Chemical mapping of a 207-nucleotide RNA with 2A3. The reactions ran in a buffer of 150 mM KOAc, 10 mM MgCl2 and 150 mM bicine (pH 8.5), at 24 C. For 2A3 the reverse transcriptase was SuperScript II with manganese. For 2A3, 1,674 sequencing reads were counted.
RNA sequence: GGGAACGACUCGAGUAGAGUCGAAAAUCAACGGGUCAGGUUUGGGUGCCGAUUAGUUGAGGUGCCGUUUCCCCAACGCCGAUGAGGGGGACGAAAGAAAUAUCGGCUGGUUUGGCUAAAUUAGGCCGGCAAAAGCUAGCCAGACAAGAUUAAAUAGCAAAUUAACACCGUUCGCGGUGUUAAUUUGAAAAGAAACAACAACAACAAC
Reactivity to 2A3 in 0.01 (KOAc 150mM, MgCl2 10mM, bicine 150mM(pH8.5), 24C), signal-to-noise 3, nucleotides 027 to 156: u090c010a000a060c030g040g010g020u020c030a070g050g030u080u150u130g090g000g010u040g000c000c010g050a060u060u110a060g050u030u100g010a010g010g020u020g010c000c010g020u010u090u090c010c000c000c010a050a040c070g020c010c010g010a020u040g020a110g000g010g000g020g000a000c020g040a030a080a110g030a020a060a020u150a030u030c010g000g000c030u040g050g040u000u040u040g010g000c010u030a030a040a130u180u110a090g050g000c010c050g000g020c040a050a050a020a020g020c000u010a000g020c010c000a010g000a010c060a030a010g030a050u190u220a100a060a140u110a050g050